The record gives the reactivity of an RNA of 207 nucleotides to 2A3 and DMS. DMS adducts were read by reverse transcription with MarathonRT. The data come from the RNA Mapping Database (RMDB), library OK3TST. 2A3 adducts were read by reverse transcription with SuperScript II with manganese. Conditions: 150 mM KOAc, 10 mM MgCl2 and 150 mM bicine (pH 8.5), 24 C.
RNA sequence: GGGAACGACUCGAGUAGAGUCGAAAAAGGGUUCAACACAGAUUUGAGACACACGUCGUUUACAUGCACGUAUUCCACUCCACGACGGAUAACUGAACUGUAGUAAGGUCCUUGUACUUCUUGUUCUGGUGACGAUGAUGUGGAUACAGACACAAUCUAGAAGUAAACCUUUCGAGGUUUACUUCUAAAAAGAAACAACAACAACAAC
Reactivity to 2A3 in 0.01 (KOAc 150mM, MgCl2 10mM, bicine 150mM(pH8.5), 24C), signal-to-noise 5, nucleotides 027 to 156: a000g070g020g000u070u130c050a040a040c050a020c030a070g060a150u070u100u170g080a080g020a020c020a010c010a010c050g010u000c010g020u030u090u140a080c080a070u140g060c070a020c090g010u020a100u160u080c030c020a050c030u030c050c010a020c040g080a010c040g030g020a070u090a160a050c010u030g040a010a010c010u050g020u040a010g040u020a120a030g070g010u050c030c000u050u060g040u090a040c020u030u130c010u080u100g030u050u000c010u040g060g020u050g020a020c030g010a030u070g010a040u060g010u010g020g010a030u060a080c050a030g070a020c020a000c000a070a040u040c030
Reactivity to DMS in 0.01 (KOAc 150mM, MgCl2 10mM, bicine 150mM(pH8.5), 24C), signal-to-noise 4, nucleotides 027 to 156: a090g010g020g010u010u000c010a080a070c060a170c050a110g020a170u010u000u000g000a220g020a130c070a080c100a100c090g030u000c030g000u020u000u000a080c100a110u000g020c070a130c090g030u000a100u010u000c020c010a080c070u010c040c080a070c020g020a100c070g020g010a100u010a040a130c040u010g000a040a050c020u000g010u000a100g010u000a060a130g020g000u010c040c040u000u000g020u000a050c080u000u000c020u000u000g030u010u000c030u000g020g030u000g020a050c050g010a080u000g000a070u010g040u000g010g000a160u010a120c030a100g010a190c030a020c040a060a140u010c030